Chemical mapping of a 177-nucleotide RNA with 2A3. 2A3 adducts were read by reverse transcription with SuperScript II with manganese. The reactions ran in a buffer of 150 mM KOAc, 10 mM MgCl2 and 150 mM bicine (pH 8.5), at 24 C.
RNA sequence: GGGAACGACUCGAGUAGAGUCGAAAAAUAAUAGUUUUCAAAUAUGUAACUAUUUAAACAUUAAAAGCUCAGUAUCUAACCCUCUAAUCCAGAGAUUCUUUGCGUUACAUUAUUUAGUACCUUAAAAGGUAAUAGCACCUUUCGAGGUGCUAUUACCAAAAGAAACAACAACAACAAC
Reactivity to 2A3 in 0.01 (KOAc 150mM, MgCl2 10mM, bicine 150mM(pH8.5), 24C), signal-to-noise 1, nucleotides 027 to 126: a010u120a060a040u020a010g000u000u000u020u170c080a040a060a080u160a100u120g030u050a030a000c000u060a000u080u110u030a010a030a200c100a080u280u230a160a250a000a000g030c000u000c080a030g030u030a070u020c030u070a070a160c030c070c020u030c050u100a000a140u120c010c000a070g020a000g010a100u160u000c010u020u060u020g000c090g000u010u010a080c090a130u000u070a060u040u060u090a070g010u060a030c000c000u030u050a100a080a010a030

The data come from the RNA Mapping Database (RMDB), library OK1LIB.